[RMDB]
RNA sequence: GGGAACGACUCGAGUAGAGUCGAAAAGAAGGCACUUUCGAGUGCCUUCAUGGGGAGCUCAGGUCUCCCUCCCUUGCAAACUCCCUAAGGGAGGAGUCCUAAUUAGGUGCACUUUCGAGUGCACCAAUGUUAAUGGAAGGUUCGCCUUCCAUUAACAAAAAGAAACAACAACAACAAC
Reactivity to DMS in 0.01 (KOAc 150mM, MgCl2 10mM, bicine 150mM(pH8.5), 24C), signal-to-noise 5, nucleotides 027 to 126: g010a020a000g010g000c000a000c010u000u000u000c160g010a020g030u000g010c000c000u010u000c000a030u010g000g010g000g010a160g020c100u000c150a050g010g010u000c010u000c090c010c010u000c000c000c000u000u010g010c170a090a080a190c130u000c010c020c020u010a070a050g030g000g010a030g010g000a040g000u000c040c010u000a110a120u010u000a090g010g020u000g000c000a000c000u000u000u010c200g010a010g010u000g000c000a000c000c000a010a010
Reactivity to 2A3 in 0.01 (KOAc 150mM, MgCl2 10mM, bicine 150mM(pH8.5), 24C), signal-to-noise 4, nucleotides 027 to 126: g000a000a000g000g000c020a010c030u070u070u150c230g090a020g010u000g000c000c000u000u000c000a000u010g020g000g010g010a050g000c060u070c230a040g090g100u040c020u040c040c030c000u020c010c000c000u010u040g060c120a190a100a160c040u060c010c000c020u070a040a040g000g010g010a010g000g000a000g020u010c010c000u120a160a130u150u170a060g000g000u000g000c000a000c010u070u080u080c230g070a010g020u010g000c000a000c000c000a000a000
Chemical mapping of a 177-nucleotide RNA with DMS and 2A3. The RNA was probed in 150 mM KOAc, 10 mM MgCl2 and 150 mM bicine (pH 8.5) at 24 C.